Chemical mapping of a 177-nucleotide RNA with 2A3 and DMS.
RNA sequence: GGGAACGACUCGAGUAGAGUCGAAAAGACACACUUCGCAGAUGACCUCCUCGUUGGUGGGUGUCGGUAAUGUUGUCAGUCACAGGCAACAGUUAACGAUCUGCUUAAAUAAAAAGAGAAGAACAAACAUUAUUAUGACCUUCGGGUCAUAAUAAUGAAAAGAAACAACAACAACAAC
Reactivity to 2A3 in 0.01 (KOAc 150mM, MgCl2 10mM, bicine 150mM(pH8.5), 24C), signal-to-noise 9, nucleotides 027 to 126: g020a000c010a000c010a010c080u150u180c060g000c020a000g000a050u030g020a040c000c000u040c010c020u140c070g150u110u140g030g010u030g010g020g010u020g010u010c000g000g020u080a100a060u020g000u010u010g000u000c020a030g210u160c060a060c040a130g000g000c000a010a000c000a020g010u030u050a030a010c030g020a010u000c000u000g010c000u010u100a110a140a050u210a040a070a030a020a010g150a010g040a180a030g050a040a030c040a070a060a000
Reactivity to DMS in 0.01 (KOAc 150mM, MgCl2 10mM, bicine 150mM(pH8.5), 24C), signal-to-noise 7, nucleotides 027 to 126: g010a020c020a030c040a040c040u010u020c150g000c010a010g030a030u010g000a050c010c010u020c090c010u020c130g010u060u010g000g010u000g000g000g040u010g000u010c000g020g010u020a100a050u000g000u000u000g020u000c000a060g010u030c270a130c290a170g000g020c000a010a010c000a000g000u020u010a050a030c010g010a010u000c010u000g010c000u020u030a050a070a110u040a040a070a060a100a090g000a100g000a090a090g010a060a090c100a050a060a130

For 2A3 the reverse transcriptase was SuperScript II with manganese. Reactivities are given for positions 27 through 126.